[RMDB]
RNA sequence: GGGAACGACUCGAGUAGAGUCGAAAAGCUCGGAGACGAGCAAGGCUGACAAAACCCUGUCCCAACCUCCACGUGGUGUCGGCUGGAUAAUGCUGCAUUAUGUUGCAUUUAUCAACUGGGAAGAAAACAUAUACCCAGGUUUCGACCUGGGUAUAUGAAAAGAAACAACAACAACAAC
Reactivity to DMS in 0.01 (KOAc 150mM, MgCl2 10mM, bicine 150mM(pH8.5), 24C), signal-to-noise 6, nucleotides 027 to 126: g000c000u010c020g020g010a250g000a230c010g010a020g010c010a090a050g000g020c020u000g000a060c060a080a070a110a120c050c030c030u020g010u000c000c000c010a090a080c070c040u020c030c060a120c130g000u030g000g010u000g000u000c020g010g010c020u000g010g000a020u010a010a000u000g000c000u010g010c010a160u040u020a070u030g010u010u000g000c010a000u000u010u010a030u000c010a080a070c090u000g010g000g000a070a080g000a090a070a060a160
Reactivity to 2A3 in 0.01 (KOAc 150mM, MgCl2 10mM, bicine 150mM(pH8.5), 24C), signal-to-noise 9, nucleotides 027 to 126: g000c000u000c000g030g010a090g010a050c010g000a000g000c010a000a040g030g000c010u020g010a020c030a020a190a050a110c010c000c010u030g050u020c000c000c000a030a060c010c020u090c030c040a100c100g090u140g010g000u030g010u030c010g010g000c010u030g060g010a010u010a040a010u020g010c010u030g000c020a090u150u150a150u300g020u020u020g000c010a010u040u070u140a030u030c020a020a040c060u080g010g010g030a050a070g050a050a080a010a010
Structure probing data (DMS and 2A3) for a 177-nucleotide construct. For 2A3, 23,221 sequencing reads were counted.